An RNA of 207 nucleotides, treated with 2A3 and DMS and read out base by base.
RNA sequence: GGGAACGACUCGAGUAGAGUCGAAAAGGUCGGUUCUCAAACAUAUGUGAUGAAGCUCCAGGGUUUCCGUAAAUUAUUUUGCUAGAUCGUGUCACAUACGGAGCUGAUCAGUUUGUAGUGUUCUUUGGCACUAUCACCACUGUCGAGGGCGAGAUUCCUAAUGCCUCCAAUUCGUUGGAGGCAUUAGAAAAGAAACAACAACAACAAC
Reactivity to 2A3 in 0.01 (KOAc 150mM, MgCl2 10mM, bicine 150mM(pH8.5), 24C), signal-to-noise 2, nucleotides 027 to 156: g020g010u040c080g000g090u060u000c040u010c050a060a160a000c030a020u170a070u160g060u060g010a100u050g020a020a010g000c030u020c010c010a090g010g090g000u030u130u000c050c020g010u010a000a060a060u180u080a110u060u230u090u150g040c020u010a040g010a090u060c030g060u090g040u100c040a070c000a040u060a060c070g020g000a000g000c010u000g000a040u040c000a010g060u010u140u210g020u030a060g010u010g040u070u130c090u090u100u110g030g000c000a000c000u010a020u070c060a010c060c000a020c040u060g020u070c020g030a060g000g030g020c030g010a010g000a070u040u050c050
Reactivity to DMS in 0.01 (KOAc 150mM, MgCl2 10mM, bicine 150mM(pH8.5), 24C), signal-to-noise 2, nucleotides 027 to 156: g000g000u000c020g000g010u010u000c030u000c030a240a160a280c060a110u010a020u000g030u000g000a010u000g000a090a160g020c050u010c000c010a110g010g000g010u010u000u050c020c100g040u030a100a070a130u010u010a120u000u000u000u010g000c070u010a070g010a070u000c060g020u010g010u010c020a040c030a100u010a050c070g030g000a040g030c000u000g000a050u000c000a050g010u010u010u000g020u000a030g050u000g010u000u010c140u010u010u000g020g040c000a010c010u000a060u010c090a070c030c020a050c030u000g020u000c000g000a130g030g030g040c030g010a200g010a230u010u010c000

Reactivities are given for positions 27 through 156.